This 177-nucleotide RNA was probed chemically with 2A3. The RNA was probed in 150 mM KOAc, 10 mM MgCl2 and 150 mM bicine (pH 8.5) at 24 C. 2A3 adducts were read by reverse transcription with SuperScript II with manganese.
RNA sequence: GGGAACGACUCGAGUAGAGUCGAAAAUACGGAAUGGUAGCAAUACCAUAUCGUGAUCUCUAAUGAGCGUCCUCAUACUGUCCAAGGUGUUCAACCAUUUUACAAUGAAUAUUUAUGGCCUUGGUCGGGCUACGGUCUACUUCGGUAGACCGUAGCCAAAAGAAACAACAACAACAAC
Reactivity to 2A3 in 0.01 (KOAc 150mM, MgCl2 10mM, bicine 150mM(pH8.5), 24C), signal-to-noise 2, nucleotides 027 to 126: u040a010c000g000g100a040a000u020g040g000u000a000g000c020a050a050u000a000c000c010a000u000a010u000c030g000u000g000a000u000c000u000c020u040a000a000u080g000a000g000c000g000u000c000c020u020c020a030u210a090c020u020g000u030c000c000a000a000g020g030u050g240u000u040c230a190a070c090c000a090u000u000u000u040a100c130a030a020u130g090a160a000u160a060u070u220u280a140u160g120g000c000c000u000u000g000g000u060c020g000

The data come from the RNA Mapping Database (RMDB), library RFM100.